[RMDB]
RNA sequence: GGGAACGACUCGAGUAGAGUCGAAAAGAUAUGGACGUACCCAGAGCUUUGAUCGUGUCGUUCGGAAACGAACGCACGGGAGCUCGGUACGUCCUAAGUCAAACCCCAAUCGUUCGCGAUUGGGGAAGUGUAUAGUGUAGUUCGCUACACUAUACACAAAAGAAACAACAACAACAAC
Reactivity to DMS in 0.01 (KOAc 150mM, MgCl2 10mM, bicine 150mM(pH8.5), 24C), signal-to-noise 9, nucleotides 027 to 126: g010a010u000a040u010g000g000a010c000g020u000a000c010c050c300a110g010a010g020c000u010u000u020g010a020u010c010g000u000g000u020c020g020u000u000c000g000g010a010a010a020c000g020a010a000c000g000c010a000c000g000g000g010a000g010c000u000c030g000g000u000a000c000g020u000c000c000u000a000a050g000u000c000a120a160a240c000c000c000c000a000a010u000c000g020u000u010c270g040c010g010a010u000u000g000g000g000g000a000a020
Reactivity to 2A3 in 0.01 (KOAc 150mM, MgCl2 10mM, bicine 150mM(pH8.5), 24C), signal-to-noise 9, nucleotides 027 to 126: g010a000u020a010u050g000g000a000c000g000u020a000c040c100c300a150g000a010g020c040u300u300u060g010a010u030c000g000u010g250u070c030g000u010u000c000g000g000a010a000a000c000g000a000a000c000g000c010a000c000g000g000g000a010g000c000u000c010g000g000u000a000c000g000u000c000c000u000a000a000g000u000c010a050a060a250c000c000c000c000a000a000u000c000g070u110u080c300g000c020g190a000u010u010g010g000g000g000a020a060
Chemical mapping of a 177-nucleotide RNA with DMS and 2A3. The 2A3 profile rests on 87,864 reads. The RNA was probed in 150 mM KOAc, 10 mM MgCl2 and 150 mM bicine (pH 8.5) at 24 C.